[RMDB]
RNA sequence: GGGAACGACUCGAGUAGAGUCGAAAACUCCGCCUCUUCGGAGGCGGAGAAAAAGAUAUGGAGAGCGUAGAUUAACUUGGAUUUAUGUCUCGGAAACGAGAGCAUUGUCAGUUAUGCGCUCUCCUAAGUCAAAAACAACAAGGUUCGCCUUGUUGAACUAUACAUAGGUCUUCGGACCUAUGUAUAGAAAAGAAACAACAACAACAAC
Reactivity to DMS in 0.01 (KOAc 150mM, MgCl2 10mM, bicine 150mM(pH8.5), 24C), signal-to-noise 2, nucleotides 027 to 156: c010u000c000c000g020c030c040u010c000u000u010c280g040g020a040g060g050c010g030g050a000g000a000a010a010a120a050g000a190u000a300u010g010g010a050g010a060g030c010g000u000a090g000a240u000u000a050a020c020u010u010g010g000a100u010u000u010a010u000g030u000c000u020c000g010g000a130a170a180c000g020a020g010a090g030c010a030u000u010g000u000c030a090g020u010u020a040u000g000c000g020c000u000c050u020c000c010u010a000a030g000u000c050a040a050a070a140a230c030a020a010c000a030a020g000g010u010u010c300g030c010c000u000u010g010u020u000g000a020a170
Reactivity to 2A3 in 0.01 (KOAc 150mM, MgCl2 10mM, bicine 150mM(pH8.5), 24C), signal-to-noise 2, nucleotides 027 to 156: c000u000c000c000g010c030c010u070c020u030u070c300g150g000a000g000g000c000g030g010a010g000a000a000a000a000a000g010a020u040a010u090g000g000a000g000a010g000c000g000u020a030g050a300u140u080a020a030c050u070u140g140g000a040u170u300u060a030u100g050u060c020u010c020g020g000a090a080a000c030g000a000g000a020g080c010a000u000u030g030u040c000a020g010u000u020a030u020g010c010g000c000u000c010u000c000c000u000a000a010g000u010c010a000a000a020a070a090c000a000a000c000a000a010g020g020u030u070c130g190c030c000u000u000g000u000u000g000a010a000